[RMDB]
RNA sequence: GGGAACGACUCGAGUAGAGUCGAAAAGAUAUGGAUGCAUAGGCGAUGAAAUGGGUCGGAUCGGAAACGAUCCGAGCCCAUGGAGCCUAUGUCCUAAGUCAAAGGCAAAAGCUUCGGCUUUUGCCAACAUAACCGAAUCCUUCGGGAUUCGGUUAUGAAAAGAAACAACAACAACAAC
Reactivity to DMS in 0.01 (KOAc 150mM, MgCl2 10mM, bicine 150mM(pH8.5), 24C), signal-to-noise 3, nucleotides 027 to 126: g000a040u000a300u000g000g020a110u000g030c050a010u000a000g020g000c000g000a080u010g000a070a130a010u000g010g010g020u000c000g000g000a010u000c000g000g000a080a100a150c020g000a010u000c000c000g000a030g020c000c000c000a000u000g000g000a110g010c000c000u000a020u000g000u010c010c000u000a050a220g010u000c040a070a090a190g010g000c000a010a000a000a010g010c000u000u020c290g010g000c000u000u000u000u000g000c000c000a020a040
Reactivity to 2A3 in 0.01 (KOAc 150mM, MgCl2 10mM, bicine 150mM(pH8.5), 24C), signal-to-noise 1, nucleotides 027 to 126: g030a040u090a030u300g010g010a020u220g070c020a000u010a000g010g080c040g300a300u110g050a100a110a060u040g050g010g030u000c020g000g000a000u000c000g010g040a030a140a020c000g000a000u000c020c000g010a020g030c000c000c000a000u000g010g000a000g000c010c000u000a000u000g010u000c010c000u040a100a010g020u030c070a100a130a170g000g000c000a030a000a000a000g000c010u080u170c300g080g000c000u000u010u020u000g000c000c000a010a000